[RMDB]
RNA sequence: GGGAACGACUCGAGUAGAGUCGAAAACGCCGCAGCCGCGCAGCCCACCGCCGCCCUCCGCACCAUGUCCACCAGGUCUGUGUCCUCGUCCUCCUACCGCAGGAUGUUCGGCGGCCCGGGCACCGGGACACACUGCCCGGUUCGCCGGGCAGUGUGUAAAAGAAACAACAACAACAAC
Reactivity to 2A3 in 0.01 (KOAc 150mM, MgCl2 10mM, bicine 150mM(pH8.5), 24C), signal-to-noise 2, nucleotides 027 to 126: c040g000c000c040g020c000a020g090c010c000g020c000g020c000a010g040c000c000c000a020c000c020g000c000c000g040c000c000c000u040c010c010g010c010a020c010c010a050u100g060u000c020c010a040c010c040a060g090g050u050c040u070g080u000g040u100c010c000u030c010g040u030c000c020u010c010c010u040a120c010c040g040c030a050g030g060a100u070g080u060u080c010g020g000c000g010g000c000c010c050g000g020g010c020a030c040c010g010g010g010
Reactivity to DMS in 0.01 (KOAc 150mM, MgCl2 10mM, bicine 150mM(pH8.5), 24C), signal-to-noise 2, nucleotides 027 to 126: c080g070c040c040g000c160a020g030c020c070g000c030g000c070a070g070c060c000c110a090c090c020g030c000c040g000c090c010c000u000c050c040g000c060a060c040c040a010u010g000u000c040c000a130c030c020a100g010g000u040c030u000g000u060g000u000c040c030u020c000g000u030c010c000u000c040c040u010a130c070c050g000c050a160g000g000a100u040g000u010u000c000g060g010c060g000g000c020c030c040g010g000g010c050a120c040c020g010g000g060